[RMDB]
RNA sequence: GGGAACGACUCGAGUAGAGUCGAAAAGCAAUGGAUAUUACCGCGCCGUAUACGCCAGGAGCACUGCGCGGCGGCAGCCAUGUGCAUGUCUUUAGCCCGAACGGUGAAAGGGUGAGCUUUACCUAUACACCUUCCCAUUCUUCGGAAUGGGAAGGUGAAAAGAAACAACAACAACAAC
Reactivity to DMS in 0.01 (KOAc 150mM, MgCl2 10mM, bicine 150mM(pH8.5), 24C), signal-to-noise 2, nucleotides 027 to 126: g000c040a120a080u030g000g010a080u020a120u000u000a080c050c050g010c070g060c020c040g010u010a090u010a190c060g020c070c020a110g000g000a110g030c130a060c010u000g010c010g020c040g000g000c030g000g000c110a070g020c050c100a040u010g010u000g010c020a070u000g010u020c000u010u010u010a160g010c050c000c010g000a080a090c110g000g010u000g000a010a020a160g000g030g010u000g000a020g000c040u000u000u000a100c020c010u040a140u000a280
Reactivity to 2A3 in 0.01 (KOAc 150mM, MgCl2 10mM, bicine 150mM(pH8.5), 24C), signal-to-noise 2, nucleotides 027 to 126: g010c020a000a090u070g030g030a030u050a100u120u210a060c040c030g040c010g030c020c010g040u050a120u020a170c050g010c020c010a040g080g050a130g090c090a020c100u030g020c070g000c010g060g000c000g020g000c020a010g000c000c020a070u150g060u060g100c020a020u030g060u000c030u000u070u110a040g000c030c030c000g040a120a060c050g010g070u160g090a080a070a040g030g020g000u030g010a020g020c030u060u090u070a090c000c000u060a040u040a120